[RMDB]
RNA sequence: GGGAACGACUCGAGUAGAGUCGAAAACUGCAUAUAACAUUUAUCAUUCAAAGGUCACGAAAGUUAAGUGUUUAGUGCCAAAAUAGCCAUCAAUUUCAUCAGCUAAGCUUUUUUGCGAGGCUUUUGACGAUGCCGUAUCAUUCGUGAUACGGCAUCGAAAAGAAACAACAACAACAAC
Reactivity to DMS in 0.01 (KOAc 150mM, MgCl2 10mM, bicine 150mM(pH8.5), 24C), signal-to-noise 1, nucleotides 027 to 126: c000u000g000c000a020u010a130u000a000a000c020a000u000u000u000a000u000c000a140u020u020c000a170a180a300g060g010u070c200a080c110g000a080a020a030g000u000u000a000a030g040u000g000u000u000u010a190g000u040g020c010c130a000a020a030a030u070a070g000c090c000a060u040c090a020a250u010u000u000c000a000u000c000a000g000c000u010a000a300g000c000u000u000u000u000u000u030g030c000g000a300g000g000c010u000u000u090u000g040a020
Reactivity to 2A3 in 0.01 (KOAc 150mM, MgCl2 10mM, bicine 150mM(pH8.5), 24C), signal-to-noise 3, nucleotides 027 to 126: c030u030g000c040a010u150a000u000a080a000c000a000u030u020u000a040u030c020a060u060u000c010a110a100a110g300g060u210c090a040c300g010a020a010a060g010u010u000a000a010g000u030g010u040u000u050a050g000u030g000c010c010a100a100a120a100u120a080g070c040c020a070u080c080a140a110u000u100u060c020a020u010c000a000g000c010u020a020a010g000c040u100u130u140u100u300u290g000c030g000a020g050g010c000u000u000u000u000g030a010